[RMDB]
RNA sequence: GGGAACGACUCGAGUAGAGUCGAAAACUCAAUGUAGGGAAUAACAUUGAAUUGAUACAAACACCUUUUUCGGUGUAGGGAAAAACACCGAAUUGAUACAAAUACCUUUCUCAAUGUAGGGAAUAACAAAACAGGCAUCGCUUCGGCGAUGCCUGAACGUACGGGUAACGUUCGCGUUACCCGUACGAAAAGAAACAACAACAACAAC
Reactivity to 2A3 in 0.01 (KOAc 150mM, MgCl2 10mM, bicine 150mM(pH8.5), 24C), signal-to-noise 3, nucleotides 027 to 156: c010u010c000a010a010u020g030u040a100g060g100g100a150a170u200a060a000c000a020u010u030g030a050a060u090u230g080a100u120a110c080a050a170a020c010a030c010c000u020u020u000u000u010c000g000g000u010g010u000a010g000g030g040a110a200a000a000a000c000a000c000c000g000a000a000u040u040g020a000u040a040c020a010a080a040u080a060c000c000u000u060u030c020u040c050a100a170u100g040u120a010g020g030g080a040a070u110a160a030c090a050a030a010a000c010a000g000g000c000a000u010c000g010c020u060u070c160g080g020c000g000a000u000g000c000c000u000g000a000a010

Record summary
Structure probing data (2A3) for a 207-nucleotide construct. The reactions ran in a buffer of 150 mM KOAc, 10 mM MgCl2 and 150 mM bicine (pH 8.5), at 24 C. The 2A3 profile rests on 1,343 reads.